Structure probing data (2A3) for a 207-nucleotide construct. It was measured as part of the RMDB library M2RFPK. Conditions: 150 mM KOAc, 10 mM MgCl2 and 150 mM bicine (pH 8.5), 24 C.
RNA sequence: GGGAACGACUCGAGUAGAGUCGAAAAGAUAAGCUAGCAGCAAAAAGGAAUCGAUUCCCACCAAGUUCGGAAAGAGAUACCGGGCGAGGCGCUGAAGAAAGAAUCUCGCUUCAGACACCCCAAGGACAUGACCUUAAAAUGUUCGCAUUUUAAGGAACAUGUGACGCUAGUUCGCUAGCGUCACAUGAAAAGAAACAACAACAACAAC
Reactivity to 2A3 in 0.01 (KOAc 150mM, MgCl2 10mM, bicine 150mM(pH8.5), 24C), signal-to-noise 1, nucleotides 027 to 156: g000a060u070a110a020g000c020u020a010g030c040a010g000c030a010a000a010a190a000g160g020a110a020u070c050g120a110u000u000c000c000c010a020c000c000a060a030g000u020u010c030g010g010a150a150a050g070a030g000a030u050a060c020c010g000g020g000c010g000a060g000g040c040g010c060u050g000a010a000g000a030a300a060g030a080a170u020c080u010c070g030c000u040u000c010a040g050a090c010a150c000c010c000c030a050a010g030g000a010c020a120u100g100a060c000c000u000u000a000a000a000a000u010g010u040u060c230g000c150a000u000u000u000u000a000a000g000g000a020a000